[RMDB]
RNA sequence: GGGAACGACUCGAGUAGAGUCGAAAAUAAUGGCAACAAGAUUGUUGACAAAGAAGUUAAAGACAUGCAGUUUGAUUUGUAUGUCAAUGUUUACAGGAGCACUAGCCCAGACCCCAAAUUUGUUGAUAAAGCGCAUACUUCGGUAUGCGCAAAAGAAACAACAACAACAAC
Reactivity to 2A3 in 0.01 (KOAc 150mM, MgCl2 10mM, bicine 150mM(pH8.5), 24C), signal-to-noise 1, nucleotides 027 to 129: u290a100a000u110g000g030c000a000a000c000a000a000g000a020u150u180g140u000u030g010a030c110a020a070a000g060a050a000g060u180u020a070a000a000g000a000c100a040u000g000c000a050g000u000u300u300g300a260u020u020u020g000u000a000u000g000u030c100a000a050u030g000u000u030u000a060c020a020g080g000a000g050c000a000c040u010a060g060c000c000c000a000g000a240c000c000c000c000a000a160a000u000u000u000g000u000u000g040a040u060a140a050a060
Reactivity to DMS in 0.01 (KOAc 150mM, MgCl2 10mM, bicine 150mM(pH8.5), 24C), signal-to-noise 2, nucleotides 027 to 129: u000a000a140u050g010g030c010a080a000c000a100a120g030a040u000u090g000u000u000g000a070c210a000a000a000g020a090a040g000u040u000a040a070a110g050a110c000a100u000g030c000a020g000u000u160u140g030a250u140u080u000g090u040a020u000g050u120c020a000a090u030g070u000u000u000a110c070a060g000g000a010g010c040a000c000u000a070g000c060c040c000a210g000a000c050c000c010c050a000a180a100u000u010u010g000u060u000g040a090u070a090a060a100